The record gives the reactivity of an RNA of 207 nucleotides to 2A3 and DMS. DMS adducts were read by reverse transcription with MarathonRT. Reactivities are rounded to 0.1 and cut off at 0 and 3. The 2A3 profile rests on 3,802 reads. The RNA was probed in 150 mM KOAc, 10 mM MgCl2 and 150 mM bicine (pH 8.5) at 24 C.
RNA sequence: GGGAACGACUCGAGUAGAGUCGAAAAUGCUGAGAAUUAUCUUCAUCUGUCCUUGUGUAUUCAUGUCACUUUCUCAUGAUUCAAAAUCCUGGGCAGAAGUGUCUGACUAGCCAAGUCUAGAAUCAUUUAGAAGCAUCUCAGCUUCAAGGGGACAGGGUCGUCUUAAGUGAUUCGUCACUUAAGACGAAAAAGAAACAACAACAACAAC
Reactivity to 2A3 in 0.01 (KOAc 150mM, MgCl2 10mM, bicine 150mM(pH8.5), 24C), signal-to-noise 5, nucleotides 027 to 156: u110g000c020u030g030a020g040a130a120u220u140a110u220c030u050u060c020a080u020c030u020g010u030c010c000u020u020g050u010g010u080a050u050u020c030a020u130g060u070c030a040c130u060u170u070c040u000c010a010u000g000a010u090u060c080a050a080a040a150u080c000c010u010g000g000g000c040a030g020a050a000g010u030g030u000c040u020g020a030c000u010a030g050c030c050a140a030g010u000c010u070a030g030a080a090u060c020a020u020u090u070a040g000a010a000g010c010a050u030c020u020c020a010g000c000u010u030c010a020a010g030g000g010g020a010c020a020g120g020g030
Reactivity to DMS in 0.01 (KOAc 150mM, MgCl2 10mM, bicine 150mM(pH8.5), 24C), signal-to-noise 2, nucleotides 027 to 156: u010g020c020u000g000a080g030a080a110u000u010a070u000c030u010u000c000a260u000c020u000g000u000c010c020u000u010g010u000g000u000a060u010u000c010a080u000g010u000c020a090c110u000u010u000c040u000c080a020u000g000a040u010u010c100a080a090a100a120u000c030c030u020g010g040g020c070a040g020a040a130g030u000g020u010c030u000g010a130c030u000a080g010c080c070a100a150g010u000c010u000a150g020a090a070u010c030a050u000u000u000a100g010a090a030g020c140a150u000c030u000c050a030g000c000u000u000c070a090a100g000g000g020g000a090c050a040g000g010g020